The record gives the reactivity of an RNA of 177 nucleotides to 2A3 and DMS.
RNA sequence: GGGAACGACUCGAGUAGAGUCGAAAACGGACGGCUCUUAUCGCUCGCAGGUCAUGCGAUGGGACUGGGCGUCCACGAACGUCAUAUUCAACAAUCGCCCUCUGUUUGCUGGACAAUAUGUUCCGUGUCCAUACCGUUAGUUCGCUAACGGUAUGGAAAAAGAAACAACAACAACAAC
Reactivity to 2A3 in 0.01 (KOAc 150mM, MgCl2 10mM, bicine 150mM(pH8.5), 24C), signal-to-noise 4, nucleotides 027 to 126: c020g030g040a000c010g120g030c020u010c010u060u150a180u080c080g050c220u020c030g000c040a030g060g220u230c060a120u060g000c000g060a070u130g010g040g050a000c040u040g020g030g000c000g010u000c010c000a020c060g050a050a010c020g050u080c070a070u070a150u230u150c030a060a050c030a060a150u090c060g050c050c000c000u030c030u040g090u040u110u100g010c050u040g000g030a040c050a130a140u130a090u290g070u090u000c020c010g030u050g050
Reactivity to DMS in 0.01 (KOAc 150mM, MgCl2 10mM, bicine 150mM(pH8.5), 24C), signal-to-noise 5, nucleotides 027 to 126: c110g010g010a050c030g020g000c020u000c010u000u000a080u000c030g010c040u000c030g020c040a060g010g030u010c270a110u000g010c020g000a030u010g010g000g000a040c110u000g000g000g000c020g000u000c010c020a100c110g010a040a050c050g010u010c100a090u010a110u000u010c090a070a050c100a070a080u010c070g010c040c040c030u000c110u000g000u000u000u010g020c100u000g000g010a070c090a090a090u010a120u000g010u010u000c020c030g010u010g010

For DMS the reverse transcriptase was MarathonRT. Source: RMDB library OK2TRN, as collected in RNAgym. The 2A3 profile rests on 5,042 reads. The RNA was probed in 150 mM KOAc, 10 mM MgCl2 and 150 mM bicine (pH 8.5) at 24 C.